[RMDB]
RNA sequence: GGGAACGACUCGAGUAGAGUCGAAAAACAAAAUGCCCAAGAUGAGGCAAAGAAGGACAUUGGCUCAAAUGUUAAACAUAAGUUAGGAGCUGAGAUAAUGCCCAGAGGAAAAAUGUUCUGUAAUUCUAAGUAAAACCCAUCUCUAAGGCAGGAUGCAGGUAGCAUCAUACUUCGGUAUGAUGCUACCAAAAGAAACAACAACAACAAC
Reactivity to 2A3 in 0.01 (KOAc 150mM, MgCl2 10mM, bicine 150mM(pH8.5), 24C), signal-to-noise 2, nucleotides 027 to 156: a000c020a000a070a010a020u020g000c000c000c010a010a010g070a020u080g000a060g040g070c040a090a120a000g090a040a040g040g010a010c020a050u000u070g050g030c010u020c030a040a080a140u100g080u120u090a160a120a090c030a050u200a160a120g070u130u100a090g080g050a090g000c030u000g020a020g000a010u270a220a060u160g010c000c020c000a010g020a010g070g040a030a030a030a030a030u000g040u060u000c050u000g050u040a010a030u070u060c030u110a070a040g030u060a050a060a020a110c000c000c010a000u000c000u000c020u090a000a050g000g030c040a000g010g010a010u070g030c010a000
Reactivity to DMS in 0.01 (KOAc 150mM, MgCl2 10mM, bicine 150mM(pH8.5), 24C), signal-to-noise 1, nucleotides 027 to 156: a040c070a040a010a170a200u000g000c000c000c070a010a140g000a150u000g010a120g020g000c000a040a020a190g000a250a120g030g010a100c030a030u020u000g030g000c010u000c010a060a070a260u000g000u000u000a050a120a100c090a080u050a050a180g000u000u000a070g010g010a120g030c040u050g000a090g000a170u000a010a050u010g000c020c000c000a170g000a070g020g000a010a100a030a070a110u010g020u000u000c050u000g030u000a060a170u000u010c010u000a030a210g030u000a000a090a130a080c030c000c000a000u000c070u010c020u010a120a040g010g000c000a070g000g030a180u000g000c000a100